The data come from the RNA Mapping Database (RMDB), library OK3TST. This 207-nucleotide RNA was probed chemically with 2A3.
[RMDB]
RNA sequence: GGGAACGACUCGAGUAGAGUCGAAAACCCACCAAGUUCUUAUCAAGAGAAGCAGAGCGACUGGCGCGACGAAGCUUCAGCAACCGGUGUAAUGGCGAAAGCCAUGACCAAGGUGCUAAAUCCAGCAAGCUCGAACAGCUUGGAAGAUAAGAACAGAAUAGUCGAUGCUGUUCGCAGCAUCGACUAUAAAAGAAACAACAACAACAAC
Reactivity to 2A3 in 0.01 (KOAc 150mM, MgCl2 10mM, bicine 150mM(pH8.5), 24C), signal-to-noise 1, nucleotides 027 to 156: c000c000c000a000c000c000a120a090g000u010u000c000u000u000a020u000c050a270a080g040a000g000a150a000g010c010a000g000a000g010c010g070a070c040u000g000g000c000g000c050g090a180c060g050a180a000g000c000u120u030c030a000g030c020a030a030c010c010g000g000u080g140u220a060a030u020g000g000c020g030a130a070a010g000c000c010a050u000g030a000c000c040a050a080g000g010u000g000c000u020a160a080a090u060c020c000a000g040c000a080a030g000c000u020c020g090a080a020c090a090g000c000u020u010g030g010a040a000g000a020u000a000a000g000a000a000c000a020g000a000

The reactions ran in a buffer of 150 mM KOAc, 10 mM MgCl2 and 150 mM bicine (pH 8.5), at 24 C.